RNA sequence: GGGAACGACUCGAGUAGAGUCGAAAACUCUCGCUGCCUGAUUUUUAGUCAGGAUUAACCAGUGAGCAGCCGCUCCGUUCACUCCUCCUCGUCUUUGGGAGGAUGCUGAGCGUCGUUUAGAAGACUUGCUGAUGCAGUUGAGCCUCAGGGCUGCAUCCACUACGCAACUCUUCGGAGUUGCGUAGUGAAAAGAAACAACAACAACAAC
Reactivity to 2A3 in 0.01 (KOAc 150mM, MgCl2 10mM, bicine 150mM(pH8.5), 24C), signal-to-noise 1, nucleotides 027 to 156: c000u010c000u010c010g000c010u030g070c000c030u000g020a070u040u040u080u090u300a090g010u010c000a000g050g000a000u130u200a030a030c040c000a000g000u000g000a030g060c030a000g020c050c060g080c050u000c000c000g010u070u000c000a000c070u060c000c000u020c000c000u040c030g070u030c050u040u070u090g010g010g000a000g000g010a010u010g020c070u010g010a000g000c000g060u150c020g030u060u080u100a050g010a030a000g030a030c090u090u100g050c040u050g030a000u000g010c000a000g020u090u130g050a110g070c010c050u160c140a130g000g000g080c000u010g000c000a010u000c020
Chemical mapping of a 207-nucleotide RNA with 2A3.
It was measured as part of the RMDB library RSTRND.
Values cover nucleotides 27 to 156.
2A3 adducts were read by reverse transcription with SuperScript II with manganese.